[RMDB]
Conditions: 150 mM KOAc, 10 mM MgCl2 and 150 mM bicine (pH 8.5), 24 C. Chemical mapping of a 177-nucleotide RNA with 2A3 and DMS. DMS adducts were read by reverse transcription with MarathonRT. Reactivities are given for positions 27 through 126. For 2A3 the reverse transcriptase was SuperScript II with manganese.
RNA sequence: GGGAACGACUCGAGUAGAGUCGAAAACAAGACAGAUGUCAGUGGGUCGGAAAGUUGCAUCCCUCUGCAGGAGCAGGCUUGGUAGGGAUGAGCUCCGUAGGAGAGGCAGAGGAUAUAUAACCUAAAAUCUCUUUAGUCGAUUCGUCGACUAAAGAGAAAAAGAAACAACAACAACAAC
Reactivity to 2A3 in 0.01 (KOAc 150mM, MgCl2 10mM, bicine 150mM(pH8.5), 24C), signal-to-noise 1, nucleotides 027 to 126: c030a030a010g060a000c030a030g220a120u110g050u110c040a040g040u070g080g000g040u060c010g090g050a160a100a020g070u060u090g080c010a000u000c010c040c000u070c000u080g000c010a080g000g080a050g000c000a010g120g020c010u110u150g100g010u100a060g000g000g050a020u020g020a030g060c020u000c040c010g000u040a080g000g170a080g020a030g000g000c020a000g010a010g050g020a000u060a020u030a000u030a070a090c010c030u040a100a060a130a150
Reactivity to DMS in 0.01 (KOAc 150mM, MgCl2 10mM, bicine 150mM(pH8.5), 24C), signal-to-noise 2, nucleotides 027 to 126: c080a150a080g010a090c050a080g000a090u000g000u010c020a070g000u020g000g000g020u010c050g010g010a040a060a070g010u000u000g000c090a070u000c060c010c010u000c030u000g030c060a110g000g010a110g010c050a110g000g000c090u000u010g040g020u000a080g010g000g010a060u010g010a100g000c020u000c010c020g020u010a050g030g000a090g010a070g000g020c030a030g000a080g000g010a090u000a040u000a070u000a090a080c040c040u010a110a040a110a110